Background: The record gives the reactivity of an RNA of 207 nucleotides to 2A3 and DMS. Reactivities are given for positions 27 through 156. The reactions ran in a buffer of 150 mM KOAc, 10 mM MgCl2 and 150 mM bicine (pH 8.5), at 24 C.
RNA sequence: GGGAACGACUCGAGUAGAGUCGAAAACGCUGGGCAUCCGAUGGUAGGGGAGCCUGUACUGAAGCGCGCACGGUAUAAAGGCAUCGAUCCGAGAGUAGGAUGCCUGUGCUGAAGCGCGCACGGCAACCGAAAGGUGCGCAAGGGUAGUUCGCUACCCCUAAGUGUUUCCAUUCGUGGAAACACUUAGAAAAGAAACAACAACAACAAC
Reactivity to 2A3 in 0.01 (KOAc 150mM, MgCl2 10mM, bicine 150mM(pH8.5), 24C), signal-to-noise 5, nucleotides 027 to 156: c060g020c030u050g000g050g000c010a080u110c040c010g070a100u140g110g040u060a040g000g040g000g010a030g030c010c030u050g060u060a070c100u140g110a190a040g000c020g000c000g010c000a020c040g000g040u020a040u030a100a300a040g010g010c010a010u120c040g080a070u040c040c090g140a140g010a050g180u140a090g070g040a000u000g000c000c000u010g010u000g000c010u040g020a100a030g010c010g010c000g000c000a000c000g030g000c030a040a040c010c000g040a090a040a020g030g010u040g020c060g010c090a040a010g000g000g000u010a010g020u060u100c170g000c090u000a000c010c000c000
Reactivity to DMS in 0.01 (KOAc 150mM, MgCl2 10mM, bicine 150mM(pH8.5), 24C), signal-to-noise 3, nucleotides 027 to 156: c080g020c050u000g020g020g020c000a030u000c030c000g000a240u010g050g020u000a140g000g000g000g000a300g020c020c010u000g010u000a190c100u000g000a080a140g010c020g040c000g050c000a300c060g000g000u000a040u000a040a160a050g050g010c000a080u010c080g030a110u000c060c080g000a300g010a120g030u000a220g030g010a050u010g010c000c000u000g020u010g030c000u010g020a090a080g040c020g020c040g000c000a040c040g030g020c000a120a120c040c000g000a110a090a100g030g030u000g040c020g010c080a090a170g020g020g020u000a020g000u010u010c220g020c000u000a020c000c010c020